[RMDB]
RNA sequence: GGGAACGACUCGAGUAGAGUCGAAAACGGCCCACCAGCCUGCUGAUCCCGUAAUGGACUACCAAGGCGACGACGGGUAGCUGGCAUGAGAGAAUAAACGGCCACAGUGGGACUGGGAUAGGGCCCAAAUAAAAUUAUUAUUCGUAAUAAUUUUAUUAAAAGAAACAACAACAACAAC
Reactivity to DMS in 0.01 (KOAc 150mM, MgCl2 10mM, bicine 150mM(pH8.5), 24C), signal-to-noise 2, nucleotides 027 to 126: c170g000g000c000c010c020a070c000c010a010g000c010c000u000g000c000u000g000a140u000c050c000c000g040u030a040a080u030g000g000a300c010u000a060c120c140a070a150g000g030c080g030a090c230g010a070c040g000g010g030u000a020g020c120u020g000g000c010a020u000g010a110g040a120g020a130a090u040a040a110a110c100g000g000c000c010a070c010a010g020u000g010g010g000a130c010u000g000g010g000a160u030a070g030g020g010c010c010c080a020

Chemical mapping of a 177-nucleotide RNA with DMS. The data come from the RNA Mapping Database (RMDB), library OK1LIB. Conditions: 150 mM KOAc, 10 mM MgCl2 and 150 mM bicine (pH 8.5), 24 C. For DMS the reverse transcriptase was MarathonRT. For DMS, 1,945 sequencing reads were counted.